[RMDB]
RNA sequence: GGGAACGACUCGAGUAGAGUCGAAAAUGCUCUUGUAAGUUGUGGCCUACUCCUGGUAUGUAAGCUGUAACUUCAUAUCCAUUUGUAAGUCUAAUCCUAGCAACUUUUCUUAAGGCUGAGUUAGGUAAUCGGUAUAGGCUUUCGAGCCUAUACCGAUAAAAGAAACAACAACAACAAC
Reactivity to DMS in 0.01 (KOAc 150mM, MgCl2 10mM, bicine 150mM(pH8.5), 24C), signal-to-noise 1, nucleotides 027 to 126: u000g000c050u000c060u000u000g030u010a050a030g000u010u000g000u000g010g020c010c050u000a020c010u000c080c130u010g020g010u000a050u010g020u010a000a030g010c040u010g000u010a050a100c000u000u000c000a020u000a070u020c130c020a030u000u000u000g010u010a040a080g020u000c030u000a100a100u000c000c000u000a040g000c020a060a070c040u000u020u000u010c160u010u020a020a100g010g010c060u000g010a100g010u000u000a050g000g010u000a090
Reactivity to 2A3 in 0.01 (KOAc 150mM, MgCl2 10mM, bicine 150mM(pH8.5), 24C), signal-to-noise 1, nucleotides 027 to 126: u070g000c000u030c080u120u040g120u190a010a080g020u040u030g020u020g000g020c000c000u000a010c010u040c050c110u120g110g040u150a050u130g020u060a080a000g000c040u000g100u110a020a020c000u020u000c000a070u060a080u090c040c010a020u020u040u070g080u020a060a180g040u110c000u050a060a070u020c010c010u010a000g020c020a040a020c000u100u030u020u080c030u120u260a010a010g050g000c060u070g040a080g120u060u020a010g050g000u010a060